An RNA of 207 nucleotides, treated with 2A3 and read out base by base.
[RMDB]
RNA sequence: GGGAACGACUCGAGUAGAGUCGAAAACCCCUCGCCCGGAGCUUCUCUCUGGCUACUACCCGGUGGAUACAACUGAAGCUUCAACCCCAAACCGCUUUUCUUGAAUCUUCACUGCUCUCCGGACGAGGGUGAAAGCCCUCGGAGCCCUAGAUUGGGUCACCAGAUUAUAGUUCGCUAUAAUCUGGUGAAAAGAAACAACAACAACAAC
Reactivity to 2A3 in 0.01 (KOAc 150mM, MgCl2 10mM, bicine 150mM(pH8.5), 24C), signal-to-noise 2, nucleotides 027 to 156: c020c000c000c000u030c010g000c080c040c000g010g000a000g020c110u190u040c080u050c020u010c020u050g060g020c010u100a090c030u060a040c020c070c000g050g000u020g030g070a030u010a170c060a100a010c100u030g010a050a000g000c000u050u020c010a040a040c010c000c020c050a140a060a140c060c110g150c110u160u160u190u110c040u060u090g020a020a020u010c000u050u010c040a020c020u050g040c000u000c010u010c040c000g020g000a020c000g010a000g000g000g000u020g000a040a020a010g000c000c000c000u020c040g100g100a040g000c020c000c000u090a080g010a200u170u230g010g010g040u040

The reactions ran in a buffer of 150 mM KOAc, 10 mM MgCl2 and 150 mM bicine (pH 8.5), at 24 C. The data come from the RNA Mapping Database (RMDB), library VIROID. For 2A3, 755 sequencing reads were counted.